[RMDB]
The data come from the RNA Mapping Database (RMDB), library RNAMAK. The record gives the reactivity of an RNA of 207 nucleotides to DMS and 2A3. The DMS profile rests on 5,571 reads.

RNA sequence: GGGAACGACUCGAGUAGAGUCGAAAAGUGUUGAUUCGUCAACACCUUACGCGUACUACUUAAGAGGUAAGUGUACAAUGACGGUUCCCAAAUAGGAACUAAGACAGUACGUUACUACCCACCUUAAGUAUCGCUCCGGUACACCUUCGGGUGUAAACACUUGUUUGUCUUUCGAGACAAACAAGUGAAAAGAAACAACAACAACAAC
Reactivity to DMS in 0.01 (KOAc 150mM, MgCl2 10mM, bicine 150mM(pH8.5), 24C), signal-to-noise 3, nucleotides 027 to 156: g020u000g020u010u000g010a060u000u010c300g020u000c010a030a010c000a020c010c010u000u010a070c090g020c040g020u000a140c090u000a010c000u000u000a030a030g000a170g000g010u000a010a080g010u000g040u000a010c000a190a090u010g020a160c190g010g000u010u000c000c000c010a020a120a180u000a070g010g000a010a020c000u000a050a140g010a230c040a070g000u000a020c020g040u000u010a060c060u010a030c010c000c010a300c090c000u010u000a020a030g000u000a020u010c020g010c020u000c030c050g000g020u010a060c010a010c000c000u000u000c300g070g020g030u000g010u000a020a080a200
Reactivity to 2A3 in 0.01 (KOAc 150mM, MgCl2 10mM, bicine 150mM(pH8.5), 24C), signal-to-noise 8, nucleotides 027 to 156: g010u010g010u000u000g010a020u060u190c250g070u010c130a000a000c000a010c000c010u100u190a110c090g010c000g040u070a100c030u010a000c000u030u010a010a000g030a020g050g000u040a110a090g020u020g010u080a010c070a100a300u140g080a040c060g030g020u000u020c040c010c000a080a130a030u150a030g010g000a010a000c030u030a110a100g140a070c050a050g020u040a000c030g080u110u070a040c010u010a010c020c000c000a170c020c030u010u000a000a010g000u010a030u300c000g010c010u010c020c010g050g090u060a000c000a010c000c000u090u280c290g100g000g000u020g000u030a060a060a010
The reactions ran in a buffer of 150 mM KOAc, 10 mM MgCl2 and 150 mM bicine (pH 8.5), at 24 C.
The 2A3 profile rests on 8,131 reads.